[RMDB]
RNA sequence: GGGAACGACUCGAGUAGAGUCGAAAAACGCUCGCUGCCGUAUCAGCCUUGGGACAAACCGAUCGAACGCUUCUUCUCCACGGUCUGCUCGAAAUUCUCCAAGUGGUUUGAGAGCUACACGGGCACGCUGACAGGCUCCAAGACCUACGCCAAGCGGUGACGCCAUCUUAUUCGUAAGAUGGCGUCAAAAAGAAACAACAACAACAAC
Reactivity to 2A3 in 0.01 (KOAc 150mM, MgCl2 10mM, bicine 150mM(pH8.5), 24C), signal-to-noise 1, nucleotides 027 to 156: a000c010g000c010u000c060g010c000u010g000c010c010g070u050a000u180c080a020g030c020c020u040u070g000g000g060a020c070a080a030a000c060c070g100a210u080c140g060a050a030c020g040c060u110u060c030u260u010c010u110c010c080a020c020g000g030u000c030u000g000c000u000c060g020a080a040a080u180u010c090u000c000c000a200a190g060u170g160g000u020u150u250g210a170g000a020g080c030u020a010c070a000c000g000g020g000c010a020c030g050c000u000g030a030c050a070g000g000c040u000c020c000a080a050g060a030c000c000u020a000c030g000c030c000a100a030g000c050g070g000